[RMDB]
RNA sequence: GGGAACGACUCGAGUAGAGUCGAAAAGGGGUCUCGCUCCGAGAGAGGGAGGACUUGGAUUUAUGACCUGAAGCCUCCACGGGUCAUUGUCAGUCUUAACUCUCGUUUGACGAGCGAGACGGAGGCACCCAAACAAGGAAACUUCGGUUUCCUUGAAGUUUGUGGAAAUCUUCGGAUUUCCACAAACAAAAGAAACAACAACAACAAC
Reactivity to 2A3 in 0.01 (KOAc 150mM, MgCl2 10mM, bicine 150mM(pH8.5), 24C), signal-to-noise 2, nucleotides 027 to 156: g020g000g020g000u000c000u010c000g000c000u020c000c030g020a030g010a010g000a030g040g050g020a060g040g030a020c090u150u290g190g010a150u170u300u190a020u080g000a010c000c000u020g030a070a000g010c000c000u000c000c000a010c010g000g000g010u000c000a000u020u020g050u080c270a120g000u000c020u010u040a030a000c000u000c000u010c000g000u110u120u130g000a000c000g000a000g000c000g000a000g000a000c000g000g000a000g010g000c000a060c000c030c000a020a040a040c010a010a000g060g000a010a000a000c020u080u230c300g140g000u000u000u040c030c000u040u030g000a010a000
Source information
The record gives the reactivity of an RNA of 207 nucleotides to 2A3. Values cover nucleotides 27 to 156. It was measured as part of the RMDB library RNAMAK. The RNA was probed in 150 mM KOAc, 10 mM MgCl2 and 150 mM bicine (pH 8.5) at 24 C.